The record gives the reactivity of an RNA of 177 nucleotides to DMS. In probing experiments dimethyl sulfate is read out at A N1 and C N3, which are open when not base-paired. Conditions: 150 mM KOAc, 10 mM MgCl2 and 150 mM bicine (pH 8.5), 24 C. Values cover nucleotides 27 to 126. The data come from the RNA Mapping Database (RMDB), library TTRDES.

RNA sequence: GGGAACGACUCGAGUAGAGUCGAAAAGAUAUGGAAUAACCAGCUCGAUAAGCGUCAGUCGGAAACGACUGGACGCUUUUGACGAGCGUUAUUCCUAAGUCAAAACUUUAAGCUUCGGCUUAAAGAACUGCUAAUCAAUCUUCGGAUUGAUUAGCAGAAAAGAAACAACAACAACAAC
Reactivity to DMS in 0.01 (KOAc 150mM, MgCl2 10mM, bicine 150mM(pH8.5), 24C), signal-to-noise 1, nucleotides 027 to 126: g000a020u000a160u000g030g000a040a020u010a000a010c120c300a230g010c000u000c000g030a160u020a000a000g010c010g000u000c010a040g010u000c000g000g010a050a050a030c010g020a020c020u000g010g020a040c000g020c000u000u000u000u040g000a160c070g000a010g030c020g040u000u000a010u000u020c000c010u000a000a070g000u000c030a140a050a190a230c000u000u000u000a010a010g010c010u000u010c260g080g000c000u000u020a000a010a020g000a110a250